[RMDB]
RNA sequence: GGGAACGACUCGAGUAGAGUCGAAAAAGCAAAAGACUGAAGGUCCGUGUUGGGGCUGAAAUCCAACCCAUGUUCUGUUUGCCACGCCCUGAGCCUUGGAACAGAGCUGGAUCAGACCAGAAGGAAGCACCGUCUCAGAUUUCGAUCUGAGACGGUGAAAAGAAACAACAACAACAAC
Reactivity to DMS in 0.01 (KOAc 150mM, MgCl2 10mM, bicine 150mM(pH8.5), 24C), signal-to-noise 1, nucleotides 027 to 126: a200g050c150a070a020a170a140g010a250c010u000g010a300a100g000g000u000c010c040g000u000g010u010u000g010g000g000g040c170u000g010a080a070a120u000c000c010a000a010c030c050c040a080u030g020u000u000c010u010g000u000u010u010g050c010c040a120c300g010c000c000c140u010g000a110g000c150c070u020u010g020g000a050a010c000a050g010a100g050c020u000g010g000a070u020c150a030g000a110c020c020a000g000a270a080g000g010a070a090g000
This 177-nucleotide RNA was probed chemically with DMS. For DMS the reverse transcriptase was MarathonRT. The DMS profile rests on 668 reads. Source: RMDB library OK2TRN, as collected in RNAgym.